[RMDB]
This 177-nucleotide RNA was probed chemically with 2A3 and DMS.
It was measured as part of the RMDB library M2PK50.
Conditions: 150 mM KOAc, 10 mM MgCl2 and 150 mM bicine (pH 8.5), 24 C.
Reactivities are given for positions 27 through 126.
The DMS profile rests on 18,379 reads.
RNA sequence: GGGAACGACUCGAGUAGAGUCGAAAAUGACGUCGUUUCGACGACGUCAACAUAAAAUCAGCGGUAAAUAAUUAGGAGGCGUUACCCCUGAACGCCUCCAUACGAGAGGGCUAUUCGUAGCCCUCAAUCCUAACUUAAAGUUCGCUUUAAGUUAGGAAAAAGAAACAACAACAACAAC
Reactivity to 2A3 in 0.01 (KOAc 150mM, MgCl2 10mM, bicine 150mM(pH8.5), 24C), signal-to-noise 5, nucleotides 027 to 126: u060g000a000c010g010u010c010g010u000u050u100c180g080a010c000g010a000c000g010u000c000a000a010c010a020u170a000a100a020a080u080c030a010g080c030g140g040u090a080a100a100u160a100a210u200u270a160g000g000a000g000g000c000g010u000u020a060c020c000c000c010u010g010a010a000c000g000c000c000u000c000c000a000u010a000c030g030a020g000a000g010g000g000c010u020a020u040u120c190g070u020a010g000c000c000c000u000c000a000a000
Reactivity to DMS in 0.01 (KOAc 150mM, MgCl2 10mM, bicine 150mM(pH8.5), 24C), signal-to-noise 8, nucleotides 027 to 126: u000g000a010c000g010u000c000g020u000u000u010c180g020a020c000g010a010c000g010u000c000a020a060c120a070u010a070a050a080a100u000c060a040g010c060g010g010u000a060a090a090u010a070a130u010u010a120g000g010a020g000g000c010g010u000u000a090c050c010c000c010u000g000a050a010c000g000c000c000u000c000c000a010u010a030c240g000a170g010a010g000g000g010c000u000a030u000u010c170g010u000a010g010c000c000c000u000c000a010a050